[RMDB]
Chemical mapping of a 207-nucleotide RNA with 2A3. Reactivities are given for positions 27 through 156.
RNA sequence: GGGAACGACUCGAGUAGAGUCGAAAACGGUUACGCCUUCUUUACCGUUAUCAAGGAAGGUACUCGGCCAUGCUAAGGGAAACAUUAUUCCUUAGGCGCAUGUCGCCGCCAGCAUGGUGUGAGGGGAAAAAGUAUGCUGGGUUCGCCCAGCAUACAACGUGUUGUUACGCUUCGGCGUAACAACACGAAAAGAAACAACAACAACAAC
Reactivity to 2A3 in 0.01 (KOAc 150mM, MgCl2 10mM, bicine 150mM(pH8.5), 24C), signal-to-noise 2, nucleotides 027 to 156: c000g000g040u000u030a010c110g050c020c000u000u020c000u000u000u000a030c000c000g300u090u180a010u090c130a010a000g110g020a010a010g000g010u030a050c020u000c000g010g000c000c000a000u000g000c020u050a070a050g030g010g130a060a060a040c090a120u200u150a200u160u080c000c020u000u080a030g000g010c010g000c050a180u240g060u300c000g000c000c030g000c010c030a000g010c000a020u000g010g010u000g160u180g040a050g030g050g020g080a000a150a000a000a000g000u010a000u000g000c000u010g000g000g030u000u060c130g130c070c000c000a000g000c000a000u010a000c000a000a020